An RNA of 207 nucleotides, treated with 2A3 and DMS and read out base by base.
Conditions: 150 mM KOAc, 10 mM MgCl2 and 150 mM bicine (pH 8.5), 24 C.
It was measured as part of the RMDB library OK3TST.
Values cover nucleotides 27 to 156.
For 2A3 the reverse transcriptase was SuperScript II with manganese.
The DMS profile rests on 3,935 reads.

RNA sequence: GGGAACGACUCGAGUAGAGUCGAAAACUCUGUGAUUUUCUUCUGUAAGGGUAGUUCUUCAACGCUUGCCAUGAACGCUCUAAAUGCUCUUGCCUGUUUUGAUGUAACUUCUAAAGCCAUAUUUUAAAUUCCUCCCCUUGAGGCUUAACUCUGAUCGAUGUGUGAACAUUUUCGAAUGUUCACACAUAAAAGAAACAACAACAACAAC
Reactivity to 2A3 in 0.01 (KOAc 150mM, MgCl2 10mM, bicine 150mM(pH8.5), 24C), signal-to-noise 2, nucleotides 027 to 156: c030u040c090u060g080u030g160a100u000u120u080u040c020u070u000c010u090g070u120a060a070g000g060g000u030a030g010u080u020c010u060u070c050a060a030c080g000c040u060u080g000c050c000a030u080g010a090a040c030g000c000u040c020u040a060a170a030u160g020c010u010c000u050u040g020c000c020u030g010u000u070u020u020g020a020u020g010u070a040a030c000u080u000c030u150a070a050a000g020c010c000a110u030a200u070u050u090u140a110a300a230u180u100c010c010u030c040c000c000c030u000u060g020a010g010g000c000u040u030a030a030c030u010c000u020g040a040u020c070g040
Reactivity to DMS in 0.01 (KOAc 150mM, MgCl2 10mM, bicine 150mM(pH8.5), 24C), signal-to-noise 1, nucleotides 027 to 156: c040u000c050u000g000u000g000a110u000u000u000u010c010u000u000c010u010g010u010a040a190g030g030g030u000a020g030u000u000c030u000u000c040a090a070c090g010c030u000u010g030c000c110a130u000g010a040a060c060g020c040u000c070u000a040a080a100u000g020c020u000c050u000u000g010c000c070u000g000u000u000u000u000g010a090u000g020u000a010a050c020u010u000c060u000a040a080a080g000c010c020a080u000a080u000u000u020u000a000a080a250u010u010c040c030u000c000c000c030c020u000u000g020a080g020g000c040u020u020a040a060c090u000c030u000g000a110u000c040g000